[RMDB]
RNA sequence: GGGAACGACUCGAGUAGAGUCGAAAAGAUAUGGAGAUAUCAUCUUACGCGAUGAAGUCGGAAACGAUGGAGCGUUAGAUGAGUAUCUCCUAAGUCAAAGACGAAUUCUGUUCGCAGAAUUCGUCAAGCAACGAAAUUGGUUCGCCAAUUUCGUUGCAAAAGAAACAACAACAACAAC
Reactivity to DMS in 0.01 (KOAc 150mM, MgCl2 10mM, bicine 150mM(pH8.5), 24C), signal-to-noise 1, nucleotides 027 to 126: g000a090u000a300u000g000g020a020g010a000u000a000u000c000a010u000c000u020u000a010c000g000c000g020a150u030g040a070a270g030u010c010g000g030a210a090a190c000g000a000u000g010g000a120g030c000g020u000u000a030g000a000u000g030a030g010u000a010u010c000u010c000c000u000a000a050g000u000c030a040a130a110g030a010c010g000a040a010u000u000c000u010g000u000u010c170g040c000a020g000a010a010u000u000c000g010u010c000a020a160
Reactivity to 2A3 in 0.01 (KOAc 150mM, MgCl2 10mM, bicine 150mM(pH8.5), 24C), signal-to-noise 1, nucleotides 027 to 126: g030a040u170a050u200g020g000a000g010a000u000a000u040c000a000u030c000u030u090a010c000g020c030g300a300u020g000a020a000g020u010c020g060g010a050a010a050c000g000a000u010g010g010a000g000c000g000u010u050a000g010a000u000g020a030g020u000a000u000c000u000c000c000u010a040a050g030u010c070a070a060a060g000a000c000g040a000a010u020u040c020u010g040u030u190c300g000c110a000g000a010a000u010u000c000g000u000c000a000a000
Structure probing data (DMS and 2A3) for a 177-nucleotide construct. The 2A3 profile rests on 1,503 reads. It was measured as part of the RMDB library TTRDEL. The RNA was probed in 150 mM KOAc, 10 mM MgCl2 and 150 mM bicine (pH 8.5) at 24 C.